Structure probing data (DMS) for a 177-nucleotide construct. The DMS profile rests on 1,881 reads. In probing experiments dimethyl sulfate is read out at A N1 and C N3, which are open when not base-paired. Values cover nucleotides 27 to 126. The RNA was probed in 150 mM KOAc, 10 mM MgCl2 and 150 mM bicine (pH 8.5) at 24 C. For DMS the reverse transcriptase was MarathonRT. It was measured as part of the RMDB library OK1LIB.
[RMDB]
RNA sequence: GGGAACGACUCGAGUAGAGUCGAAAAAGUGAGCUGAGAUCGAGCCACUGCACUCCAGCCUGGGCGACAGAGCAAGACUGUGUCUCAAAAAAAAAAAAAGAAAAAGAAAUAAUGAUUAGUGGCCCGAAAUCCUUCGGUGAUUCGUCACCGAAGGAUUAAAAGAAACAACAACAACAAC
Reactivity to DMS in 0.01 (KOAc 150mM, MgCl2 10mM, bicine 150mM(pH8.5), 24C), signal-to-noise 1, nucleotides 027 to 126: a000g020u010g000a120g040c000u010g030a140g050a060u000c060g010a110g010c000c030a020c020u010g000c040a130c050u000c060c060a060g040c060c060u000g000g020g000c040g000a070c060a070g010a130g000c080a070a110g000a060c060u000g000u000g010u000c020u000c010a010a000a000a020a000a000a000a000a020a010a230a050a200g050a060a010a070a030a090g000a110a070a020u020a070a090u010g000a060u000u010a030g030u000g000g020c040c070c000g000a100